[RMDB]
RNA sequence: GGGAACGACUCGAGUAGAGUCGAAAAGAUAUGGAGACGUGAGAGUUUUUCCUACAGGGAGUCGGCAUGUCGGAAACGACAUUUCGACGAGGAUCUGUAGGGAAAAACUCUCACGUCUCCUAAGUCACAUACUCAAGCAGUUCGCUGCUUGAGUAUGAAAAGAAACAACAACAACAAC
Reactivity to DMS in 0.01 (KOAc 150mM, MgCl2 10mM, bicine 150mM(pH8.5), 24C), signal-to-noise 2, nucleotides 027 to 126: g010a050u010a300u000g000g000a010g010a020c000g020u010g000a020g000a020g010u000u000u000u000u000c010c000u010a010c010a010g010g000g000a020g010u000c000g000g040c120a020u000g010u000c000g030g010a100a090a250c000g000a010c000a010u000u000u000c000g020a020c010g020a050g010g000a020u010c000u000g000u000a010g020g020g000a000a000a000a010a010c000u000c000u000c000a000c010g000u000c000u000c000c000u000a010a040g020u000c020a300
Chemical mapping of a 177-nucleotide RNA with DMS.
The reactions ran in a buffer of 150 mM KOAc, 10 mM MgCl2 and 150 mM bicine (pH 8.5), at 24 C.